[RMDB]
RNA sequence: GGGAACGACUCGAGUAGAGUCGAAAAACGGUACAUAUACGUAUUUCUUACCAGAUAUUGCGUACCACUUCGAUAAAGUUAAACGUGGUAAUGACAUUUUAAUCGAUUUAUUUGGUGCUGAUCAUCAGCUCCGUCUGCGGUUCGCCGCAGACGGAGCAAAAGAAACAACAACAACAAC
Reactivity to 2A3 in 0.01 (KOAc 150mM, MgCl2 10mM, bicine 150mM(pH8.5), 24C), signal-to-noise 1, nucleotides 027 to 126: a000c000g000g080u190a190c290a140u300a300u160a000c000g000u030a300u000u270u140c000u000u160a000c000c000a000g000a000u300a080u000u050g000c030g000u000a000c000c000a000c000u000u110c000g300a300u110a160a050a220g000u140u000a000a240a000c000g000u080g110g000u030a170a190u240g160a000c000a030u000u000u000u300a300a300u140c100g080a050u000u050u160a240u080u000u220g000g000u000g000c000u140g000a000u260c000a000u000c000a050
The record gives the reactivity of an RNA of 177 nucleotides to 2A3. For 2A3, 196 sequencing reads were counted. The reactions ran in a buffer of 150 mM KOAc, 10 mM MgCl2 and 150 mM bicine (pH 8.5), at 24 C.